[RMDB]
RNA sequence: GGGAACGACUCGAGUAGAGUCGAAAACGCAUCCGGGUCCAACAGCAAAGAUCGUAGAGCCAUGUCAAUGAGGGUGCUAGAAGCCGAGAAAGACGUGCUGAAAAGGGGUGUUUCGGACAACCACGACGACUAAUGCGCGAUUCGUCGCGCAUUAGUCAAAAGAAACAACAACAACAAC
Reactivity to DMS in 0.01 (KOAc 150mM, MgCl2 10mM, bicine 150mM(pH8.5), 24C), signal-to-noise 1, nucleotides 027 to 126: c050g040c100a020u000c000c020g020g020g000u000c000c080a090a160c160a030g040c040a150a030a140g020a080u000c050g130u000a060g000a030g000c140c190a100u000g000u020c030a040a130u000g000a260g030g020g000u060g000c060u010a080g000a000a210g000c000c000g000a090g000a010a170a150g010a130c080g000u030g000c060u000g000a050a040a000a000g020g000g000g000u000g010u020u000u000c020g010g000a200c110a140a100c060c000a090c120g000a030c070
Reactivity to 2A3 in 0.01 (KOAc 150mM, MgCl2 10mM, bicine 150mM(pH8.5), 24C), signal-to-noise 2, nucleotides 027 to 126: c070g030c000a040u000c000c020g060g020g000u000c000c010a090a060c030a080g070c060a090a180a070g020a050u050c000g090u130a040g070a020g060c000c050a050u070g000u060c010a000a120u170g020a100g060g070g010u050g030c000u010a020g060a120a000g020c000c010g050a070g080a050a020a050g100a060c050g030u080g030c010u000g060a110a000a000a050g000g010g000g000u070g000u000u040u110c000g070g040a070c000a020a040c060c020a010c060g130a070c120